[RMDB]
RNA sequence: GGGAACGACUCGAGUAGAGUCGAAAAGCCGAAGAGUUCGCUCUUCGGCGACGAAUUUGGCGUAGAUGAGAGUCUACAGUACUAGCCAUCCCAGAUGAACAAAUAAGCAUUGCUUCGGCAAUGCUAAUCAUAUCCAAGAAUUCGUUCUUGGAUAUGAAAAAGAAACAACAACAACAAC
Reactivity to 2A3 in 0.01 (KOAc 150mM, MgCl2 10mM, bicine 150mM(pH8.5), 24C), signal-to-noise 9, nucleotides 027 to 126: g000c000c000g000a000a000g010a010g040u110u160c210g030c120u000c000u000u010c000g000g060c000g000a000c010g070a030a110u110u070u100g020g000c050g010u010a010g000a030u030g050a010g010a010g090u000c000u000a010c020a020g060u080a110c100u110a040g010c010c000a020u010c010c010c000a020g060a200u240g050a100a050c060a080a100a140u270a200a010g000c000a000u000u010g000c000u030u070c190g010g000c000a000a000u000g000c000u010a000a000
Reactivity to DMS in 0.01 (KOAc 150mM, MgCl2 10mM, bicine 150mM(pH8.5), 24C), signal-to-noise 9, nucleotides 027 to 126: g010c000c000g010a010a010g010a020g020u000u020c200g010c010u000c010u000u000c000g010g010c000g010a030c120g010a090a080u000u000u000g010g010c020g010u000a010g000a020u000g000a250g000a210g000u000c000u000a010c010a160g010u010a090c190u010a170g010c010c010a070u000c000c000c000a200g010a120u010g000a070a090c180a050a080a100u010a090a040g010c000a010u000u000g010c000u000u010c200g020g010c000a000a000u000g010c000u000a010a050

An RNA of 177 nucleotides, treated with 2A3 and DMS and read out base by base.
For DMS the reverse transcriptase was MarathonRT.
Values cover nucleotides 27 to 126.
For DMS, 17,010 sequencing reads were counted.